[RMDB]
RNA sequence: GGGAACGACUCGAGUAGAGUCGAAAAAUCGUUGGCAGCUCGGUCAUGGCUUGGAUAGGCAAUGUGCCUCUGGCUGUUGUGGCUUGUUGUGGAAUGGUGUCCUUCAUAUUGCUGAUUUGCUUAAUACUCCCUGGAGGAGAUUCGUCUCCUCCAGGGAAAAAGAAACAACAACAACAAC
Reactivity to DMS in 0.01 (KOAc 150mM, MgCl2 10mM, bicine 150mM(pH8.5), 24C), signal-to-noise 1, nucleotides 027 to 126: a090u010c090g020u000u010g010g000c040a060g010c040u000c100g010g010u000c050a070u000g000g000c010u000u010g020g010a070u010a040g000g020c020a120a040u010g010u010g040c030c010u000c080u000g020g010c030u010g030u000u010g000u000g010g000c120u000u000g000u000u000g050u020g020g000a070a100u000g000g010u010g000u000c030c010u000u000c050a070u000a110u000u010g010c030u000g010a100u020u000u000g010c020u010u000a090a080u020a130c200

Background: An RNA of 177 nucleotides, treated with DMS and read out base by base. Values cover nucleotides 27 to 126. The RNA was probed in 150 mM KOAc, 10 mM MgCl2 and 150 mM bicine (pH 8.5) at 24 C.